RNA sequence: GGGAACGACUCGAGUAGAGUCGAAAAUGUGAUGUGUUCGCACAUCACAAACUACGGAGAAUCUUCCUCGGUAUAAAAGAGGAACCCUUGGAAACAAGGGAAUAAGCCCCUGCUUCGGCAGGGGCAAUAUCCAUUUAAUCUUCGGAUUAAAUGGAUAAAAAGAAACAACAACAACAAC
Reactivity to DMS in 0.01 (KOAc 150mM, MgCl2 10mM, bicine 150mM(pH8.5), 24C), signal-to-noise 5, nucleotides 027 to 126: u000g020u000g010a010u010g010u000g000u010u010c200g020c010a010c000a010u010c000a000c000a020a060a110c080u000a090c130g000g020a140g000a090a080u010c110u000u000c000c000u010c000g010g020u010a120u010a090a060a090a130g000a020g010g000a030a100c000c000c000u010u000g000g010a190a080a210c010a020a000g000g000g000a090a040u000a090a160g000c020c000c000c000u000g000c010u000u000c170g020g000c000a000g000g000g000g010c010a000a010
Reactivity to 2A3 in 0.01 (KOAc 150mM, MgCl2 10mM, bicine 150mM(pH8.5), 24C), signal-to-noise 2, nucleotides 027 to 126: u020g010u010g010a010u000g000u000g020u040u060c150g030c080a000c000a000u010c000a000c000a000a060a000c010u070a040c040g150g030a130g040a160a160u020c040u060u030c040c000u000c020g000g020u250a210u080a300a140a040a010g010a000g010g000a000a010c000c000c000u010u010g000g030a010a000a020c000a000a000g000g000g010a030a010u030a020a000g020c040c020c000c010u010g030c000u030u040c180g070g030c000a000g030g000g000g000c010a000a000